Structure probing data (DMS and 2A3) for a 177-nucleotide construct. The reactions ran in a buffer of 150 mM KOAc, 10 mM MgCl2 and 150 mM bicine (pH 8.5), at 24 C.

[RMDB]
RNA sequence: GGGAACGACUCGAGUAGAGUCGAAAAAGGGUGUUAAAACUGGUGCACAAAGAAAGUACUGCUCUUGAAGCAGUGGCGGCCAGACAACCGUUGAGAUAGAUCCACAGAUGAACAACCUUUCUGUUGCUUGUGUAUAAGAAUUCGUUCUUAUACACAAAAAAGAAACAACAACAACAAC
Reactivity to DMS in 0.01 (KOAc 150mM, MgCl2 10mM, bicine 150mM(pH8.5), 24C), signal-to-noise 9, nucleotides 027 to 126: a040g010g000g020u000g010u000u010a050a060a130a130c040u000g010g010u010g010c080a130c140a090a100a110g000a090a100a110g010u020a020c010u000g010c010u000c030u030u020g000a130a020g010c010a010g020u000g010g010c030g010g000c030c020a060g000a100c120a070a070c040c030g010u010u010g000a110g010a120u020a080g010a090u010c040c030a030c060a050g010a080u010g000a060a050c070a040a060c040c040u000u000u000c070u000g010u010u010g010c150
Reactivity to 2A3 in 0.01 (KOAc 150mM, MgCl2 10mM, bicine 150mM(pH8.5), 24C), signal-to-noise 9, nucleotides 027 to 126: a010g060g010g010u050g020u060u060a060a070a030a060c020u040g040g000u060g040c050a020c040a080a140a020g140a050a090a010g090u050a030c000u000g010c000u010c020u110u300g100a140a000g000c000a000g000u010g020g010c010g030g000c010c000a020g030a060c020a020a030c010c010g020u030u070g030a030g010a080u170a050g080a060u040c030c010a020c000a020g060a060u100g040a060a010c020a030a060c020c010u040u080u040c040u050g050u050u040g030c060